[RMDB]
RNA sequence: GGGAACGACUCGAGUAGAGUCGAAAAGCUAAGUUCGCUUAGCAAAAAAUCCUAAGUCGUCAACAGCAAGGUUUGUCAGCGUUUGGUCGGAAACGACCAGACGCUUGGAUUUAACCUUGACAUGACGAUAUGGAAAAAAGCAGGCUUCGGCCUGCAACAAAACUAGCACUUUCGAGUGCUAGUUUUGAAAAGAAACAACAACAACAAC
Reactivity to DMS in 0.01 (KOAc 150mM, MgCl2 10mM, bicine 150mM(pH8.5), 24C), signal-to-noise 2, nucleotides 027 to 156: g020c000u010a010a060g000u010u010c300g000c020u010u000a000g000c010a000a010a050a050a060a120u000c010c000u010a110a300g050u000c030g010u010c000a050a100c060a280g000c010a010a020g020g000u000u000u000g010u000c000a030g000c000g000u000u000u000g020g000u000c000g020g020a200a110a240c010g040a050c000c010a020g010a020c000g000c000u020u000g040g000a030u000u000u000a000a040c000c000u010u000g000a050c030a300u010g020a020c000g010a010u000a230u000g000g000a000a080a130a160a120a100g000c000a020g000g010c000u000u010c290g010g020c000c000u000g020c000a000a070
Reactivity to 2A3 in 0.01 (KOAc 150mM, MgCl2 10mM, bicine 150mM(pH8.5), 24C), signal-to-noise 2, nucleotides 027 to 156: g000c010u010a010a000g000u050u070c100g090c100u010u010a000g000c010a050a010a000a000a050a140u050c030c000u050a110a040g020u010c000g000u000c010a040a060c020a210g040c000a000a010g000g010u010u030u010g020u030c020a000g000c010g000u000u000u000g000g010u000c010g010g060a060a040a140c000g000a000c000c000a000g000a000c010g000c000u030u040g010g000a010u120u170u180a010a000c000c000u000u000g040a160c010a040u050g000a000c000g000a000u010a040u080g010g050a040a120a010a040a030a020g000c000a000g030g010c010u070u170c270g110g000c030c000u000g000c000a000a000